Overview: The record gives the reactivity of an RNA of 207 nucleotides to 2A3 and DMS. For DMS the reverse transcriptase was MarathonRT. It was measured as part of the RMDB library M2RFPK.
RNA sequence: GGGAACGACUCGAGUAGAGUCGAAAAGAAGGGUGAAAGCCCUCGAUACUGUAGUGGAAAUUAUAAAUAAGAAGAGUUCUGAGUUGCUUAAGCAGAACUAAAAUAAAAAGACAAGCAUUAUUACAAACAUGGCGAGGUAAGUUCGCUUACCUCGCAACACUGAGAGGAAGUUCGCUUCCUCUCAGUGAAAAGAAACAACAACAACAAC
Reactivity to 2A3 in 0.01 (KOAc 150mM, MgCl2 10mM, bicine 150mM(pH8.5), 24C), signal-to-noise 2, nucleotides 027 to 156: g040a020a010g030g000g010u080g030a110a030a010g020c020c020c000u010c000g030a040u040a090c030u070g070u150a060g030u050g010g030a020a070a020u090u100a120u150a220a110a070u160a090a040g070a040a030g030a020g040u010u020c000u020g040a050g030u090u060g060c010u080u010a090a020g020c000a010g000a020a020c080u030a000a020a000a000u130a000a060a000a000a000g020a000c020a010a020g010c000a010u070u090a030u100u170a250c130a070a130a010c030a060u100g090g000c000g000a000g000g000u000a000a000g030u000u040c080g000c040u000u000a000c010c000u000c010g000c000a000a000
Reactivity to DMS in 0.01 (KOAc 150mM, MgCl2 10mM, bicine 150mM(pH8.5), 24C), signal-to-noise 1, nucleotides 027 to 156: g040a160a000g040g020g060u000g010a210a120a270g020c020c010c010u010c030g010a010u010a090c040u000g020u000a050g020u000g000g000a160a060a120u030u000a000u020a030a020a180u000a050a170g020a090a150g020a160g000u000u000c000u010g000a170g000u000u010g030c080u000u000a030a070g110c000a050g010a000a120c000u020a010a030a060a140u000a050a030a090a180a180g010a050c020a010a110g020c030a000u000u000a060u000u000a080c080a040a060a080c060a090u000g000g000c000g020a050g020g020u000a000a030g010u000u000c290g080c020u010u000a020c030c010u020c000g020c000a010a000